Chemical mapping of a 207-nucleotide RNA with DMS and 2A3.
RNA sequence: GGGAACGACUCGAGUAGAGUCGAAAAUGGGCCGUGUGCGUAACCAGGACAAGAUCUCCUUCUCUCCAACGUUGUUGCCAACUCAUGAUUCUCCUAACCUGUGCUUGGAGAGACGUGGACCCAGAGUAAAACGAAGGGUGCUUCGGCACCCUUCGAACAUAUGCUGACAGUUCGCUGUCAGCAUAUGAAAAGAAACAACAACAACAAC
Reactivity to DMS in 0.01 (KOAc 150mM, MgCl2 10mM, bicine 150mM(pH8.5), 24C), signal-to-noise 2, nucleotides 027 to 156: u000g010g020g030c010c030g050u000g020u010g020c010g010u000a060a080c030c020a070g000g020a230c060a100a090g010a140u000c040u000c040c030u000u030c010u000c000u000c010c020a060a120c120g000u000u010g000u000u000g000c020c020a050a060c030u010c040a100u000g030a160u000u000c010u010c030c020u010a080a080c050c050u000g030u000g010c050u000u000g030g020a060g020a040g010a020c050g020u010g000g000a070c020c020c020a280g000a160g020u010a080a070a110a160c020g020a030a030g000g030g030u000g000c020u000u010c240g040g040c000a000c000c010c000u010u010c010g010a010a070
Reactivity to 2A3 in 0.01 (KOAc 150mM, MgCl2 10mM, bicine 150mM(pH8.5), 24C), signal-to-noise 1, nucleotides 027 to 156: u050g050g000g010c000c030g090u070g000u030g010c030g000u010a080a000c050c000a010g020g020a000c100a150a020g070a150u060c050u050c090c000u070u000c010u020c000u010c000c010a080a060c070g000u020u030g000u010u040g040c020c040a040a010c010u020c060a090u100g090a110u140u030c060u000c000c020u030a050a070c000c080u130g040u130g070c070u020u040g000g010a020g010a010g000a000c020g020u090g030g000a100c000c000c000a000g020a040g040u230a020a080a020a030c030g000a000a000g000g000g000u020g000c000u030u080c170g030g030c000a030c000c020c000u000u000c010g010a000a000
Source: RMDB library M2RFPK, as collected in RNAgym.